Structure probing data (DMS and 2A3) for a 177-nucleotide construct.
RNA sequence: GGGAACGACUCGAGUAGAGUCGAAAAGCUGAGGCAAGAGAAUUGCUUGAACCCAGGAGAUGGAAGUUGCAGUGAGCUGAUAUCAUGCCCCUGUACUCCAGCCUGGGUGACAGAGCAAGACUCUGUCCGACUCUUAGGUAUUCGUACCUAAGAGUCGAAAAGAAACAACAACAACAAC
Reactivity to DMS in 0.01 (KOAc 150mM, MgCl2 10mM, bicine 150mM(pH8.5), 24C), signal-to-noise 5, nucleotides 027 to 126: g010c100u000g020a120g010g010c030a040a060g000a040g010a080a210u000u000g000c010u000u000g000a110a050c000c000c010a030g000g000a040g010a110u010g010g000a040a020g020u020u000g010c000a020g010u010g000a030g020c000u000g010a290u020a100u010c100a060u000g010c010c010c090c000u000g000u000a030c010u000c010c000a030g000c010c000u000g000g000g010u000g000a070c160a140g000a010g010c020a020a020g000a260c000u000c010u000g010u000c030
Reactivity to 2A3 in 0.01 (KOAc 150mM, MgCl2 10mM, bicine 150mM(pH8.5), 24C), signal-to-noise 6, nucleotides 027 to 126: g080c070u100g070a050g050g010c060a220a070g020a000g010a040a050u010u010g000c000u020u010g010a010a010c010c000c000a000g030g010a140g030a110u050g020g020a080a070g060u250u060g000c000a010g010u010g090a080g030c010u010g080a110u060a090u300c080a050u200g010c010c000c000c000u000g000u010a000c000u000c010c010a050g090c020c000u010g000g000g000u000g000a000c000a010g140a000g000c000a010a020g000a010c000u010c010u000g010u000c000
For 2A3, 12,570 sequencing reads were counted. Values cover nucleotides 27 to 126. 2A3 adducts were read by reverse transcription with SuperScript II with manganese. The reactions ran in a buffer of 150 mM KOAc, 10 mM MgCl2 and 150 mM bicine (pH 8.5), at 24 C.